[RMDB]
RNA sequence: GGGAACGACUCGAGUAGAGUCGAAAAAGCCAGGGAUUUUCAUCCUCGAGUCUCUUGAUGGUCUUUCUGGCCUUCCGGAGGUCUCUCUCGAGCUCCUCUGCCUUUCUUCUUGUGGAGAUCCACUUUUGCGCCUUCAGGUUCGCCUGAAGGAAAAGAAACAACAACAACAAC
Reactivity to 2A3 in 0.01 (KOAc 150mM, MgCl2 10mM, bicine 150mM(pH8.5), 24C), signal-to-noise 9, nucleotides 027 to 129: a010g030c030c020a020g020g010g010a030u050u060u070u170c060a050u050c010c000u010c020g030a030g050u010c010u000c000u030u030g020a020u040g020g010u000c030u040u230u060c150u190g020g000c000c000u030u020c010c010g020g010a020g020g070u030c030u010c000u000c000u010c040g000a000g010c020u020c000c000u020c020u010g010c000c000u020u040u030c000u030u010c010u080u300g020u020g010g020a060g020a090u050c020c010a040c000u070u050u070u150g070c080g020
Reactivity to DMS in 0.01 (KOAc 150mM, MgCl2 10mM, bicine 150mM(pH8.5), 24C), signal-to-noise 9, nucleotides 027 to 129: a030g050c060c040a050g040g010g000a060u000u060u050u090c070a100u040c050c020u020c040g010a070g030u000c000u000c030u020u020g030a030u030g000g010u020c020u040u140u030c210u110g010g010c030c030u020u010c020c020g050g000a040g000g000u020c030u020c040u030c020u030c060g040a050g000c050u020c000c000u010c040u030g010c010c020u030u040u020c030u000u000c080u060u160g040u000g010g010a070g020a210u040c020c050a070c010u040u020u040u070g020c160g020
Notes:
Chemical mapping of a 170-nucleotide RNA with 2A3 and DMS. The DMS profile rests on 72,686 reads. Source: RMDB library 15KLIB, as collected in RNAgym. The 2A3 profile rests on 131,799 reads.